[RMDB]
RNA sequence: GGGAACGACUCGAGUAGAGUCGAAAAACGGAUGGUACGCCAUCCGACCAUUGGGUAGAAGGGUUCAAUCAGCACCGUGACGGUGCAGAUGGGAAAUUGCCCAUGAUACGCACCAUACGUGGUGCGAAAAAGCCAUCGGUGUUCGCACCGAUGGCAACCAGUUCUGGAACUUCGGUUCCAGAACUGGAAAAGAAACAACAACAACAAC
Reactivity to 2A3 in 0.01 (KOAc 150mM, MgCl2 10mM, bicine 150mM(pH8.5), 24C), signal-to-noise 1, nucleotides 027 to 156: a000c020g000g010a000u000g000g030u010a030c250g020c010c000a010u000c000c000g010a000c000c000a040u000u140g000g000g000u070a040g060a070a060g180g030g010u080u100c090a030a000u000c030a090g000c000a000c010c050g170u220g250a100c260g030g000u000g000c040a010g000a000u000g080g000g060a000a040a100u060u030g000c000c000c000a000u030g060a000u020a000c000g000c000a000c000c000a000u060a130c160g230u030g000g000u000g020c030g000a000a000a000a000a000g000c000c000a010u000c030g000g000u010g000u000u050c190g000c050a000c070c020g000a000u010g000g000c000a000a000
Conditions: 150 mM KOAc, 10 mM MgCl2 and 150 mM bicine (pH 8.5), 24 C.
Chemical mapping of a 207-nucleotide RNA with 2A3.
As a SHAPE reagent, 2A3 marks flexible, mostly unpaired nucleotides at the ribose 2'-OH.
2A3 adducts were read by reverse transcription with SuperScript II with manganese.